[RMDB]
RNA sequence: GGGAACGACUCGAGUAGAGUCGAAAAGUAUAGUGAUGAAUAUAAUCACAAUUGUCACUACCUCUGAGGCACAUUUUAUUUUCGUUUUGUAUCUGACCCUGGUGAUUGCAUCUAAGAACGGUGAUAAUCCAUCUGUGGUGUUCGCACCACAGAUGGAAAAAGAAACAACAACAACAAC
Reactivity to DMS in 0.01 (KOAc 150mM, MgCl2 10mM, bicine 150mM(pH8.5), 24C), signal-to-noise 1, nucleotides 027 to 126: g000u000a090u030a100g000u000g050a000u000g000a090a010u010a100u060a060a170u020c270a020c040a240a160u020u000g000u000c000a020c020u000a010c170c060u000c040u020g000a090g000g000c020a000c080a080u000u060u000u000a150u090u000u000u000c090g050u000u000u000u000g000u000a000u020c050u000g000a190c000c010c000u000g000g010u000g000a050u000u050g000c060a030u000c000u000a060a060g000a030a090c080g000g000u030g000a120u000a110a040
Reactivity to 2A3 in 0.01 (KOAc 150mM, MgCl2 10mM, bicine 150mM(pH8.5), 24C), signal-to-noise 3, nucleotides 027 to 126: g120u090a080u150a160g000u000g010a010u020g050a100a120u180a080u070a140a160u110c010a010c020a110a040u050u070g010u010c010a020c030u030a050c000c010u030c020u050g090a100g010g060c020a000c000a030u100u110u000u050a190u010u130u090u070c090g010u020u000u010u300g140u000a100u050c030u040g020a050c000c000c030u030g000g010u010g020a030u000u070g020c030a010u040c020u070a080a030g040a110a020c040g020g000u000g010a010u030a170a040
This 177-nucleotide RNA was probed chemically with DMS and 2A3.
For 2A3 the reverse transcriptase was SuperScript II with manganese.
Source: RMDB library RFM100, as collected in RNAgym.
The RNA was probed in 150 mM KOAc, 10 mM MgCl2 and 150 mM bicine (pH 8.5) at 24 C.